[RMDB]
RNA sequence: GGGAACGACUCGAGUAGAGUCGAAAAGGAAGGAAAGUUGACUGAUUGGGUACACGAAGGAUUCCGGCUCAACGAAGCACUGGCAGCGGCACAGACCGCCCACGAAUGUACCAUGGGCGUAGGCGACGCGUUGCCUGUAAUUCGUUACAGGCAACGCAAAAGAAACAACAACAACAAC
Reactivity to DMS in 0.01 (KOAc 150mM, MgCl2 10mM, bicine 150mM(pH8.5), 24C), signal-to-noise 2, nucleotides 027 to 126: g000g010a090a130g010g010a070a000a080g020u010u020g030a080c080u000g020a130u000u000g020g000g000u000a040c090a060c180g000a070a080g010g010a130u000u000c030c000g010g000c090u000c050a090a040c100g000a070a070g000c090a060c060u010g000g030c080a070g010c030g000g020c020a070c040a050g010a100c150c010g000c020c020c000a020c110g020a070a120u020g030u010a060c090c030a050u000g020g000g030c010g000u000a090g000g000c090g000a100c140
Reactivity to 2A3 in 0.01 (KOAc 150mM, MgCl2 10mM, bicine 150mM(pH8.5), 24C), signal-to-noise 1, nucleotides 027 to 126: g030g040a020a030g060g040a130a020a030g050u090u100g050a080c040u050g020a170u060u130g020g030g020u080a060c070a020c000g140a020a010g060g010a040u100u070c020c030g000g000c010u030c040a050a100c030g040a040a020g030c020a010c060u010g010g020c000a030g010c030g000g070c020a020c000a140g090a100c050c010g040c000c000c000a020c030g060a110a060u170g010u110a060c070c000a050u060g000g000g000c000g030u000a050g050g040c050g030a010c030